About this RNA: The record gives the reactivity of an RNA of 207 nucleotides to 2A3 and DMS. For DMS, 2,198 sequencing reads were counted. The RNA was probed in 150 mM KOAc, 10 mM MgCl2 and 150 mM bicine (pH 8.5) at 24 C.
RNA sequence: GGGAACGACUCGAGUAGAGUCGAAAAAAGGAAGAUCUAGGUCGACAACGGAUAUAACUUCGUCGUAGGGUUCGAUCGAUAUAUCUAAAUCGUUCUCCAUGACAUUUCCAUCUUUCAAAAACGUAUGACUCGACCACGUGAAUAGAUUGCCGCGAUCGAAUGAACGACUUUUCGAAGUCGUUCAUUCAAAAGAAACAACAACAACAAC
Reactivity to 2A3 in 0.01 (KOAc 150mM, MgCl2 10mM, bicine 150mM(pH8.5), 24C), signal-to-noise 5, nucleotides 027 to 156: a000a010g120g010a100a070g030a010u050c050u110a040g010g000u010c000g000a040c030a050a000c040g040g010a020u060a020u060a230a090c080u160u080c080g020u000c000g010u040a140g020g000g000u020u010c010g000a020u020c030g000a000u020a010u020a020u190c160u130a080a080a000u000c000g000u000u010c030u000c010c000a010u030g010a010c010a050u070u120u080c050c030a090u060c140u060u210u100c080a070a090a030a040a040c020g050u100a180u190g080a140c040u000c010g010a000c010c010a030c060g160u150g040a010a010u030a050g030a010u010u070g070c040c020g040c090g060a050u110c040
Reactivity to DMS in 0.01 (KOAc 150mM, MgCl2 10mM, bicine 150mM(pH8.5), 24C), signal-to-noise 2, nucleotides 027 to 156: a070a150g050g000a080a090g000a090u010c080u000a140g000g010u010c000g030a070c030a020a090c090g000g010a100u000a110u010a080a070c020u010u000c100g050u000c010g000u000a030g000g000g000u000u000c000g020a010u000c000g030a160u000a160u010a150u000c120u010a100a020a020u000c010g050u000u000c030u000c000c010a050u010g030a030c030a060u000u000u000c090c000a090u000c090u000u010u000c050a050a100a100a080a090c060g020u000a200u000g000a090c070u030c030g000a030c010c020a140c160g040u000g020a050a290u000a040g020a150u020u010g010c030c010g000c060g000a120u000c090